RNA sequence: GGGAACGACUCGAGUAGAGUCGAAAAGGACGAGUAGAACCCAAGGCGUGCAUCACGAAAUGGGAACAACUCGUAGGCGUGUUGUUCGCAUUUCGGAGAGAUCUGCCUUGCGAAAGGUACGCCAUGACUACUCCGAAGUAUUCGUACUUUGGAGUAGAAAAGAAACAACAACAACAAC
Reactivity to DMS in 0.01 (KOAc 150mM, MgCl2 10mM, bicine 150mM(pH8.5), 24C), signal-to-noise 9, nucleotides 027 to 126: g010g000a140c030g010a050g010u000a060g010a060a260c020c030c010a100a080g010g010c000g010u000g010c290a110u000c010a090c000g000a000a010a010u000g000g000g010a010a030c000a010a010c000u000c010g010u010a100g010g020c090g010u000g000u000u000g000u000u000c000g000c000a010u000u000u000c000g000g000a080g010a090g000a060u000c120u000g010c020c000u000u000g000c240g000a060a040a030g000g010u000a030c010g010c010c010a130u000g000a260
Reactivity to 2A3 in 0.01 (KOAc 150mM, MgCl2 10mM, bicine 150mM(pH8.5), 24C), signal-to-noise 9, nucleotides 027 to 126: g040g000a020c020g010a010g020u040a010g020a040a010c010c000c010a010a040g010g000c020g010u020g000c040a040u010c000a010c040g000a000a000a010u040g010g060g000a000a000c000a000a000c000u000c010g030u040a160g090g230c120g000u020g000u000u000g000u000u000c040g010c130a000u000u000u000c000g000g010a060g000a000g000a030u010c020u070g000c000c000u000u010g000c010g030a060a010a000g020g010u020a010c010g000c000c010a050u000g050a030